[RMDB]
RNA sequence: GGGAACGACUCGAGUAGAGUCGAAAAGGGACUAUCUUCUAAAUCUUUACAUUCUUUAGCCGCUAACAAAAUACCUCGUUUAGCAUAAUGUAUAUGAUGAUGAUUAGGGGUAUCACUCGAUUUAAUACAUCUGUCAAUCUUUCGAGAUUGACAGAUGAAAAGAAACAACAACAACAAC
Reactivity to 2A3 in 0.01 (KOAc 150mM, MgCl2 10mM, bicine 150mM(pH8.5), 24C), signal-to-noise 3, nucleotides 027 to 126: g040g030g000a020c010u050a080u010c030u120u030c000u040a160a160a110u030c000u050u060u050a060c010a040u030u050c010u050u140u060a080g040c100c060g000c050u010a040a020c040a070a100a060a050u170a140c040c050u090c110g030u070u030u030a010g000c010a000u050a060a010u060g090u070a030u010a040u300g070a050u030g010a010u030g020a040u040u090a060g000g020g000g030u010a040u070c060a050c070u050c050g090a100u020u110u090a160a050u110a100
Reactivity to DMS in 0.01 (KOAc 150mM, MgCl2 10mM, bicine 150mM(pH8.5), 24C), signal-to-noise 2, nucleotides 027 to 126: g010g000g010a120c150u000a040u000c030u000u000c030u000a060a160a100u010c000u010u010u000a030c020a050u010u000c060u000u010u010a040g020c180c150g020c050u000a010a010c060a100a070a080a090u000a060c180c090u000c130g020u000u000u000a030g020c010a070u000a040a010u000g000u010a080u000a030u010g010a100u000g000a050u000g010a070u000u010a070g020g000g000g010u010a040u000c090a070c070u010c040g010a150u000u000u020a060a080u010a180

Background
Structure probing data (2A3 and DMS) for a 177-nucleotide construct. 2A3 adducts were read by reverse transcription with SuperScript II with manganese. Reactivities are given for positions 27 through 126. For DMS the reverse transcriptase was MarathonRT. For DMS, 1,504 sequencing reads were counted.